[RMDB]
RNA sequence: GGGAACGACUCGAGUAGAGUCGAAAAGUUAUGCUCUCGCUGCCUAAUGGCGGUGCGGGAAACCCACUCUAAAGUCCUUAGGGUUAGCCGCUUAAGGCGGGGUUCGGAGGCACCUGGCAACAGAAGCUGAAACUGUGCACAUUCGUGUGCACAGUAAUACGUUGAGUGUAUUCGUACACUCAACGUAAAAAGAAACAACAACAACAAC
Reactivity to DMS in 0.01 (KOAc 150mM, MgCl2 10mM, bicine 150mM(pH8.5), 24C), signal-to-noise 1, nucleotides 027 to 156: g000u010u000a050u000g000c010u000c040u010c000g020c020u010g000c000c010u010a080a110u000g020g050c020g020g060u000g040c030g000g010g000a060a040a110c000c010c020a120c070u010c040u000a070a070a080g010u000c070c050u000u010a030g050g010g020u010u010a080g020c030c070g070c030u000u000a080a060g000g010c010g020g020g010g010u000u000c030g000g010a300g000g010c020a030c000c010u000g020g010c070a120a120c030a080g000a090a090g020c010u010g010a130a070a040c010u020g050u010g020c010a010c000a120u000u010c280g070u020g000u000g000c000a010c000a020g000u000a010a100
Reactivity to 2A3 in 0.01 (KOAc 150mM, MgCl2 10mM, bicine 150mM(pH8.5), 24C), signal-to-noise 2, nucleotides 027 to 156: g040u060u100a100u160g040c000u020c000u020c030g020c010u060g010c000c030u300a300a220u260g000g000c040g060g080u010g000c000g000g000g000a110a000a010c000c010c010a070c040u140c040u130a060a060a160g300u080c020c020u010u020a020g000g000g030u040u070a010g010c060c010g010c100u040u050a030a000g020g000c030g000g000g010g000u040u160c070g080g010a070g040g000c000a010c000c010u040g220g000c000a020a000c000a050g020a040a000g000c020u070g020a010a000a040c000u000g000u000g000c000a000c000a020u030u040c170g110u050g000u000g000c000a020c010a000g000u000a000a020